[RMDB]
RNA sequence: GGGAACGACUCGAGUAGAGUCGAAAAUAUGCACGCGGUUGCAGGUGAGUACGCGUGUAUGGCGUUGCUGACACCGACGAGCAGUGCGCUGUCGCGCGCUGUUUCAAGUCGCCGCCUGCGCUAGAGAAGUCUCACGAGCAUUCGUGCUUGUGGGGCUAAAAGAAACAACAACAACAAC
Reactivity to DMS in 0.01 (KOAc 150mM, MgCl2 10mM, bicine 150mM(pH8.5), 24C), signal-to-noise 9, nucleotides 027 to 126: u040a020u000g000c000a010c020g010c010g010g010u030u040g010c020a030g000g010u000g000a100g030u010a020c020g010c000g010u000g010u000a010u010g000g010c060g010u000u010g000c020u010g010a130c120a100c140c020g010a040c060g000a040g010c010a010g000u000g000c000g010c010u010g010u040c190g010c000g010c000g000c000u000g000u000u010u010c060a100a140g010u000c010g000c020c010g000c000c000u000g010c010g000c180u020a100g010a120g010a150
Reactivity to 2A3 in 0.01 (KOAc 150mM, MgCl2 10mM, bicine 150mM(pH8.5), 24C), signal-to-noise 9, nucleotides 027 to 126: u200a030u030g010c000a000c010g020c000g050g040u140u300g010c010a010g010g010u020g020a100g040u100a010c000g000c000g000u000g000u010a020u060g030g000c050g060u050u150g040c040u040g010a030c020a040c050c020g010a010c010g000a000g000c000a000g000u010g000c000g000c010u120g100u300c190g000c000g000c000g000c000u000g000u000u110u020c020a020a010g000u000c000g000c000c000g000c000c000u000g000c020g000c030u050a020g020a010g030a220